[RMDB]
RNA sequence: GGGAACGACUCGAGUAGAGUCGAAAACUUGUUGCGCUUGUGAAAUAUUAAAAUAUGUUUCUUGAAUAUCUGGAAUAUACCUUAAUGCUAGUGAGACUGCGUAACUGAUUUUAUAAUUCACACCUAGCAAUUAACCGUAGUUCGCUACGGUUAAUUGAAAAGAAACAACAACAACAAC
Reactivity to 2A3 in 0.01 (KOAc 150mM, MgCl2 10mM, bicine 150mM(pH8.5), 24C), signal-to-noise 3, nucleotides 027 to 126: c010u010u060g000u000u030g020c000g000c030u100u090g020u000g090a020a130a080u290a060u120u180a110a100a040a090u170a070u040g020u040u000u000c010u020u080g060a140a110u200a170u180c020u040g000g090a120a010u140a020u020a210c000c030u060u040a130a020u060g010c060u020a020g030u010g150a110g010a040c040u080g020c000g000u000a010a000c020u030g060a050u120u050u080u050a220u070a150a110u070u060c030a020c010a020c050c000u020a020g020
Reactivity to DMS in 0.01 (KOAc 150mM, MgCl2 10mM, bicine 150mM(pH8.5), 24C), signal-to-noise 4, nucleotides 027 to 126: c070u000u010g010u000u000g020c030g020c050u010u010g020u000g000a070a090a100u000a070u000u000a030a050a060a080u000a040u000g000u000u000u000c000u000u000g000a140a150u020a070u000c090u000g000g000a040a060u000a070u010a060c100c060u000u000a040a040u000g000c050u000a060g010u000g020a130g000a120c090u000g020c030g000u000a020a020c010u010g000a080u010u010u010u000a070u010a090a100u010u000c030a050c060a080c120c050u000a080g010